[RMDB]
An RNA of 177 nucleotides, treated with DMS and 2A3 and read out base by base.
For DMS, 1,341 sequencing reads were counted.
The RNA was probed in 150 mM KOAc, 10 mM MgCl2 and 150 mM bicine (pH 8.5) at 24 C.
For 2A3, 2,038 sequencing reads were counted.
For 2A3 the reverse transcriptase was SuperScript II with manganese.

RNA sequence: GGGAACGACUCGAGUAGAGUCGAAAAGAACGAAACUUCGGUUUCGUUCAAAUAAUGCGUAGCUCGCGCUACGCAGGGAACGAGUAGGUCGUGCCACCUACAAAAGAUUUUAGUUCGCUAAAAUCAACUUCUUGCUAUACUUCGGUAUAGCAAGAAGAAAAGAAACAACAACAACAAC
Reactivity to DMS in 0.01 (KOAc 150mM, MgCl2 10mM, bicine 150mM(pH8.5), 24C), signal-to-noise 2, nucleotides 027 to 126: g000a010a010c010g000a010a000a000c000u000u000c200g060g010u000u000u000c000g020u020u010c000a020a080a050u000a110a070u000g000c000g010u000a010g000c000u000c300g020c300g000c000u000a000c000g020c000a020g020g000g030a080a060c110g000a110g000u010a020g010g000u010c040g010u010g050c120c090a090c000c020u000a000c030a090a060a110a140g000a010u000u000u000u000a000g000u010u010c250g030c000u010a000a000a000a000u000c000a170a190
Reactivity to 2A3 in 0.01 (KOAc 150mM, MgCl2 10mM, bicine 150mM(pH8.5), 24C), signal-to-noise 2, nucleotides 027 to 126: g010a010a020c000g000a000a010a000c010u050u080c190g060g000u000u010u010c000g010u030u010c000a000a000a000u060a020a040u030g000c000g000u000a000g000c030u030c160g140c020g000c020u010a000c000g000c020a000g060g020g020a100a000c040g000a020g050u000a010g000g070u120c060g090u170g120c060c030a040c010c000u000a010c000a010a090a010a010g030a010u020u000u010u010a050g000u030u060c250g000c110u020a010a010a000a010u000c010a030a060